[RMDB]
RNA sequence: GGGAACGACUCGAGUAGAGUCGAAAAGGAUACGAACCACCACAUGGAAUGGUUCCCACGCCGCUGGAUUCCUGUACGUAUGUCACACCAGCAGUCGCACUGGAAUUGCUCCUUCAACUCCGCAACAGCUACCGAGGGCAUUCGUGCCCUCGGUAGCAAAAGAAACAACAACAACAAC
Reactivity to 2A3 in 0.01 (KOAc 150mM, MgCl2 10mM, bicine 150mM(pH8.5), 24C), signal-to-noise 2, nucleotides 027 to 126: g020g000a000u080a170c060g010a020a000c010c020a000c010c000a120c080a100u170g040g050a050a020u100g010g040u050u000c010c000c010a000c050g030c000c000g090c010u010g000g070a070u140u150c020c000u030g070u070a070c100g080u140a110u170g130u070c010a020c010a010c030c000a030g020c020a000g050u200c050g000c020a030c050u000g030g110a030a110u060u100g010c020u030c020c000u190u270c060a020a020c030u000c000c000g050c040a090a080c040a070